Chemical mapping of a 177-nucleotide RNA with DMS and 2A3. For DMS the reverse transcriptase was MarathonRT. The DMS profile rests on 1,654 reads. For 2A3 the reverse transcriptase was SuperScript II with manganese. Reactivities are given for positions 27 through 126. For 2A3, 2,522 sequencing reads were counted.
RNA sequence: GGGAACGACUCGAGUAGAGUCGAAAAGGAGUACUCUUCGGAGUACUCCAGCUACCGAGAAUCUUCCUCGGUAUAUAAAACAAACCCUUGGAAACAAGGGAAAUACGGCAGGGUUCGCCCUGCCGAAACUCUUAUCAACGUUCGCGUUGAUAAGAGUAAAAGAAACAACAACAACAAC
Reactivity to DMS in 0.01 (KOAc 150mM, MgCl2 10mM, bicine 150mM(pH8.5), 24C), signal-to-noise 2, nucleotides 027 to 126: g000g000a030g000u000a000c000u000c010u010u010c140g000g010a010g020u010a000c010u000c000c000a060g000c140u010a020c000c000g000a020g020a090a200u020c170u000u010c120c000u000c000g000g000u000a000u000a040u010a040a050a090a060c140a130a100a170c000c000c000u010u010g010g010a120a210a230c000a030a000g000g010g010a000a030a090u000a130c000g010g010c000a020g010g020g020u000u000c250g020c000c010c010u000g000c010c000g000a010a040
Reactivity to 2A3 in 0.01 (KOAc 150mM, MgCl2 10mM, bicine 150mM(pH8.5), 24C), signal-to-noise 2, nucleotides 027 to 126: g000g000a020g030u040a010c020u020c030u070u140c260g020g030a010g000u000a000c000u010c000c010a000g040c000u010a010c010c010g000a000g030a050a100u100c100u160u100c130c010u000c000g040g000u000a000u000a010u030a040a040a010a010c040a000a130a130c000c000c020u000u000g000g000a030a050a000c000a000a010g000g000g060a020a060a010u070a010c000g000g000c000a010g000g020g050u010u070c090g060c010c000c020u000g000c000c000g000a000a000